An RNA of 177 nucleotides, treated with 2A3 and DMS and read out base by base. It was measured as part of the RMDB libraries RFM100 and RFMREP. The 2A3 profile rests on 455 reads. For DMS the reverse transcriptase was MarathonRT.

[RMDB]
RNA sequence: GGGAACGACUCGAGUAGAGUCGAAAAAAUUGGGCGAGGGUUAGUUGCUUUGACUGAGCUAAUUGUUUAAUGCGAGAAAUUAAGGUCAUUUCAAGUCCUCCUUGUGUUUUCCGUUUGCUAAUUUUAAAUGAUUGUGUAGGUUCGCCUACACAAUCAUAAAAGAAACAACAACAACAAC
Reactivity to 2A3 in 0.01 (KOAc 150mM, MgCl2 10mM, bicine 150mM(pH8.5), 24C), signal-to-noise 1, nucleotides 027 to 126: a000a060u130u020g010g000g000c090g020a040g000g000g000u030u030a050g010u010u050g040c000u040u000u000g050a050c010u010g010a000g040c090u090a030a030u070u050g130u050u140u160a040a030u100g090c000g000a020g030a130a140a120u120u090a150a000g030g010u010c030a010u040u000u070c050a040a000g090u020c000c000u020c000c000u030u050g030u000g020u020u050u050u050c030c030g020u020u000u000g050c060u070a040a080u090u130u050u050a050a200
Reactivity to DMS in 0.01 (KOAc 150mM, MgCl2 10mM, bicine 150mM(pH8.5), 24C), signal-to-noise 3, nucleotides 027 to 126: a030a050u010u000g010g010g000c080g000a030g000g000g000u010u010a070g030u000u000g020c080u010u010u000g010a030c060u010g010a160g010c060u010a040a150u010u010g010u010u020u020a090a100u040g020c040g000a100g010a100a040a070u010u020a060a170g000g020u000c010a030u010u000u010c070a030a040g000u010c060c030u000c000c000u000u000g020u010g000u010u010u000u010c020c030g020u010u010u010g020c040u030a030a120u010u000u010u010a020a080